[RMDB]
RNA sequence: GGGAACGACUCGAGUAGAGUCGAAAAGCAUAAUGAGGGGCGUACGGCUCAGGGCCGAAAGGCAGCAGGCAAAAGUCCCCGCGUCAUGACAGUGGUCGGAUAGCGCUUGCGAGCUGUCGGCAUCAGCCAGCCUUGUCAAUACCUCCAGACCCACCACCUAUGGGUUAGUGUUCGCACUAACCCAUAGAAAAGAAACAACAACAACAAC
Reactivity to 2A3 in 0.01 (KOAc 150mM, MgCl2 10mM, bicine 150mM(pH8.5), 24C), signal-to-noise 1, nucleotides 027 to 156: g070c030a050u030a130a070u230g030a080g000g000g010g000c030g050u060a010c010g060g010c000u060c120a090g060g030g010c000c000g020a080a060a020g030g000c010a000g040c020a000g000g000c030a050a050a050a270g020u000c000c010c000c020g000c060g000u160c150a210u140g130a080c040a070g040u000g000g040u220c080g080g000a000u010a070g080c070g010c000u000u040g000c000g030a050g000c050u040g100u180c010g060g000c000a050u120c000a070g000c030c000a000g000c000c000u010u060g130u040c050a020a070u030a010c000c050u030c020c010a000g000a120c000c000c000a010c000c040a070c050
Reactivity to DMS in 0.01 (KOAc 150mM, MgCl2 10mM, bicine 150mM(pH8.5), 24C), signal-to-noise 1, nucleotides 027 to 156: g000c080a120u010a060a000u000g050a300g020g050g000g010c050g000u000a080c090g030g000c000u000c000a200g020g050g000c030c010g000a010a040a110g020g020c000a300g020c030a110g050g080c000a060a020a210a260g010u000c030c000c000c000g000c020g020u020c040a150u000g010a100c140a120g030u010g010g040u000c160g080g020a270u000a060g050c290g040c050u000u000g010c020g000a090g080c000u000g020u020c010g000g000c020a050u010c080a090g050c010c030a130g050c020c020u000u000g030u020c080a180a040u000a140c020c000u050c030c110a110g020a230c000c000c020a240c130c050a080c270
An RNA of 207 nucleotides, treated with 2A3 and DMS and read out base by base. For 2A3, 650 sequencing reads were counted. For DMS, 1,448 sequencing reads were counted. The reactions ran in a buffer of 150 mM KOAc, 10 mM MgCl2 and 150 mM bicine (pH 8.5), at 24 C. Reactivities are given for positions 27 through 156. It was measured as part of the RMDB library ARCHII.